RNA sequence: GGGAACGACUCGAGUAGAGUCGAAAAUGCGCCAAUCGAACUGACGAUCCUGCGCAAGGGCGCCGACAAGCCGAUCACGCUCAAGAUCAAUCGCGCCAUUAUCAAGGUGAAGGCGGUUCGCUCGCGAGAUAAUAUGGCUAUUCGUAGCCAUAUUAUCAAAAGAAACAACAACAACAAC
Reactivity to DMS in 0.01 (KOAc 150mM, MgCl2 10mM, bicine 150mM(pH8.5), 24C), signal-to-noise 9, nucleotides 027 to 126: u010g020c030g020c110c160a130a100u010c020g010a030a040c050u000g010a040c010g010a210u000c010c010u000g010c220g020c160a070a070g000g010g010c010g010c060c070g020a040c170a090a120g010c130c120g010a060u000c060a110c170g010c150u010c170a100a110g000a040u010c060a090a130u000c060g010c000g010c010c010a060u000u000a070u010c120a170a040g000g010u010g000a180a120g000g000c010g010g000u000u000c010g010c170u000c240g000c040g010a110
Reactivity to 2A3 in 0.01 (KOAc 150mM, MgCl2 10mM, bicine 150mM(pH8.5), 24C), signal-to-noise 9, nucleotides 027 to 126: u140g010c030g010c020c030a010a070u070c010g010a010a010c010u020g010a010c020g010a010u010c010c010u070g010c080g000c070a040a040g030g000g000c010g010c070c020g030a040c070a150a030g110c100c050g080a030u040c020a020c140g130c060u110c130a100a060g010a070u040c020a020a040u050c030g000c010g000c020c000a020u090u080a090u100c060a050a010g020g000u010g020a020a010g030g000c010g010g000u010u010c000g000c020u030c020g030c010g020a070